[RMDB]
RNA sequence: GGGAACGACUCGAGUAGAGUCGAAAAUAUUGUUACUUAUGGACUCUGUAACACGGUUUGCUCGUGCUCAGCGUGAAAUAGGCUUAGCUGCGGGAGAACCACCGACUCGCCGCGGUUAUCCUCCGUCCGAUAAGGGAGGGUUCGCCCUCCCUUAUCGAAAAGAAACAACAACAACAAC
Reactivity to DMS in 0.01 (KOAc 150mM, MgCl2 10mM, bicine 150mM(pH8.5), 24C), signal-to-noise 3, nucleotides 027 to 126: u020a120u010u000g020u000u010a080c040u000u000a060u010g010g000a150c050u000c050u000g010u010a020a040c030a080c120g010g000u000u010u010g010c100u000c020g010u000g030c030u000c040a020g020c030g030u010g010a050a110a110u010a070g000g000c130u000u000a020g000c020u000g020c000g010g000g000a040g010a090a060c060c080a080c170c050g010a080c000u020c020g010c020c010g030c070g010g000u000u000a040u000c040c010u010c100c060g000u010c090
Reactivity to 2A3 in 0.01 (KOAc 150mM, MgCl2 10mM, bicine 150mM(pH8.5), 24C), signal-to-noise 2, nucleotides 027 to 126: u160a040u020u100g020u040u040a030c030u110u060a070u210g120g040a030c050u050c030u110g030u040a020a010c020a050c090g040g050u080u030u120g080c040u080c020g000u020g010c000u000c060a030g000c040g060u060g150a050a080a120u210a060g040g010c020u030u050a000g000c030u060g000c000g000g040g000a030g020a110a020c050c010a020c010c040g020a010c000u030c010g260c050c000g060c010g000g000u030u000a020u010c000c000u000c010c010g070u050c030
An RNA of 177 nucleotides, treated with DMS and 2A3 and read out base by base.
The 2A3 profile rests on 1,941 reads.
For DMS, 2,360 sequencing reads were counted.
It was measured as part of the RMDB library OK2TRN.